[RMDB]
About this RNA
Conditions: 150 mM KOAc, 10 mM MgCl2 and 150 mM bicine (pH 8.5), 24 C. Structure probing data (DMS and 2A3) for a 207-nucleotide construct. DMS adducts were read by reverse transcription with MarathonRT. Reactivities are rounded to 0.1 and cut off at 0 and 3. For DMS, 1,644 sequencing reads were counted.

RNA sequence: GGGAACGACUCGAGUAGAGUCGAAAAGAUGCUUUGGGAUCAAAUAUUCGUGUGGACUCCCGUGGAAUGGAAGUCAUGCGCAUUCUUCCCAGACUGAACGACGAUGUCAAUGAGGAAUGGAUCAAUGAUAAAACUCGAUUUGCCUGUGAUGGAUUGCACGUCAUUCCCUUUUCGAAGGGAAUGACGUAAAAGAAACAACAACAACAAC
Reactivity to DMS in 0.01 (KOAc 150mM, MgCl2 10mM, bicine 150mM(pH8.5), 24C), signal-to-noise 1, nucleotides 027 to 156: g020a080u000g000c080u000u010u000g020g010g000a020u000c020a060a080a180u000a050u000u030c000g040u000g060u000g040g010a070c030u000c000c010c040g080u000g050g040a050a170u010g000g000a080a070g020u000c010a070u010g010c070g090c190a130u000u000c080u000u000c010c000c010a100g050a120c030u020g030a120a260c110g040a060c040g020a180u000g000u000c090a030a200u000g000a090g020g030a160a210u000g030g010a150u000c010a080a150u010g030a160u000a020a020a030a130c030u010c050g040a120u000u000u000g000c010c000u000g080u010g020a150u000g040g000a100u000u000g010c040
Reactivity to 2A3 in 0.01 (KOAc 150mM, MgCl2 10mM, bicine 150mM(pH8.5), 24C), signal-to-noise 4, nucleotides 027 to 156: g060a010u060g030c080u070u060u050g030g000g020a050u080c090a030a130a040u190a050u080u090c040g010u020g000u020g080g100a050c010u030c020c000c020g040u090g040g160a170a120u180g000g010a010a020g010u020c010a050u050g000c010g000c040a000u030u000c020u030u000c000c000c010a000g050a040c030u050g040a090a030c050g070a020c020g050a120u070g040u050c010a020a100u090g030a020g030g020a070a110u120g010g040a030u040c060a070a060u100g050a020u030a070a110a020a030c020u020c060g030a080u020u040u160g030c000c000u040g010u050g050a040u050g080g030a050u020u070g030c090